Structure probing data (2A3) for a 177-nucleotide construct.

RNA sequence: GGGAACGACUCGAGUAGAGUCGAAAAACAUGAAGAGCACAUGUCCCAUCUAAGGGGCAGCCUCUGCUUAGCUUCAGCAGUUGUUGCCAUACAGGGAUGUAGGAACAUUGCUACCACAUCUUUAGGCGUACGGCUCAUGGUUCGCCAUGAGCCGUACAAAAGAAACAACAACAACAAC
Reactivity to 2A3 in 0.01 (KOAc 150mM, MgCl2 10mM, bicine 150mM(pH8.5), 24C), signal-to-noise 1, nucleotides 027 to 126: a000c010a030u090g090a150a010g050a040g000c020a110c030a090u050g000u160c020c050c010a000u020c020u040a180a150g160g000g040g050c000a000g060c000c000u000c020u060g010c000u090u070a080g030c010u260u070c130a000g000c010a000g000u000u000g000u000u060g040c000c000a070u100a190c070a060g260g030g000a020u010g060u210a210g090g000a070a010c040a040u030u210g010c010u010a050c000c040a060c000a080u060c090u010u030u050a170g080g000c030

Background
The reactions ran in a buffer of 150 mM KOAc, 10 mM MgCl2 and 150 mM bicine (pH 8.5), at 24 C. Source: RMDB library OK2TST, as collected in RNAgym.